This 177-nucleotide RNA was probed chemically with DMS and 2A3. For DMS the reverse transcriptase was MarathonRT. Source: RMDB library OK2TST, as collected in RNAgym.
RNA sequence: GGGAACGACUCGAGUAGAGUCGAAAACUAGAUACUAACAUUAAAAUGUCUACAGAUAAUGCUGUUUAUCAGUGUCGUAAAUUACGAGCCAGAUUGCCUAGACCUGAUACUAGACAUCUGAGAGUAACCCAUUAUGGACUUUCGAGUCCAUAAUGGGAAAAGAAACAACAACAACAAC
Reactivity to DMS in 0.01 (KOAc 150mM, MgCl2 10mM, bicine 150mM(pH8.5), 24C), signal-to-noise 2, nucleotides 027 to 126: c030u000a150g010a080u000a040c050u000a130a020c050a070u020u010a030a110a170a090u000g000u000c080u000a100c140a080g000a100u010a050a040u010g020c060u010g000u000u000u000a080u010c030a070g020u000g000u000c030g000u000a070a070a070u000u010a030c050g020a170g000c180c040a010g000a040u000u010g040c010c000u000a050g020a120c100c070u000g000a080u010a110c070u000a000g000a010c000a030u010c010u000g000a030g000a290g000u000a030a100
Reactivity to 2A3 in 0.01 (KOAc 150mM, MgCl2 10mM, bicine 150mM(pH8.5), 24C), signal-to-noise 3, nucleotides 027 to 126: c020u010a030g040a060u160a050c050u060a150a050c030a060u300u120a070a140a090a090u140g000u030c020u060a080c030a040g050a070u060a110a050u240g070c050u060g030u110u070u070a060u070c040a040g030u000g040u110c000g040u030a070a150a050u120u070a060c010g020a020g080c010c030a030g050a120u080u150g040c020c010u040a030g000a070c000c070u050g040a020u020a160c010u000a000g010a020c010a010u000c030u010g050a030g010a000g090u090a060a050